[RMDB]
RNA sequence: GGGAACGACUCGAGUAGAGUCGAAAAUUACCCGCUGAACUUAAGCAUAUUAAUAAGCGGAGGAAAAGAAACUAACAAGGAUUCCCCUAGUAACGGCGAGUGAAGCGGGAAGAGCUCAAGCUUAAAACUAUCACUAUAAGUUCGCUUAUAGUGAUAGAAAAGAAACAACAACAACAAC
Reactivity to 2A3 in 0.01 (KOAc 150mM, MgCl2 10mM, bicine 150mM(pH8.5), 24C), signal-to-noise 4, nucleotides 027 to 126: u050u040a170c000c000c020g000c000u010g010a040a030c010u050u090a130a030g010c020a040u090a060u280u150a130a140u130a210a010g040c040g020g020a100g060g040a040a060a000a040g090a090a140a010c110u130a060a040c070a080a040g050g010a080u010u040c000c000c000c010u010a010g020u020a060a040c040g050g010c070g010a010g010u000g020a020a010g060c010g000g010g010a020a010g020a000g000c010u030c130a070a060g020c010u050u160a010a050a010a040
Reactivity to DMS in 0.01 (KOAc 150mM, MgCl2 10mM, bicine 150mM(pH8.5), 24C), signal-to-noise 4, nucleotides 027 to 126: u010u010a200c020c010c000g030c040u000g000a270a070c140u000u000a110a150g000c050a080u010a150u010u010a080a090u000a130a060g010c080g000g010a110g030g000a020a040a070a090g000a110a110a110c110u000a030a080c220a070a080g010g030a240u010u010c000c000c000c030u000a030g010u000a060a070c140g000g030c120g010a050g000u000g010a130a070g010c300g010g010g010a050a050g000a090g010c020u000c100a060a060g000c130u000u000a040a070a110a160
This 177-nucleotide RNA was probed chemically with 2A3 and DMS.
For 2A3 the reverse transcriptase was SuperScript II with manganese.
DMS adducts were read by reverse transcription with MarathonRT.
For 2A3, 3,782 sequencing reads were counted.
The DMS profile rests on 3,509 reads.
Source: RMDB library RFMREP, as collected in RNAgym.
Values are in units of 0.01, from 0 to 300, in steps of 10.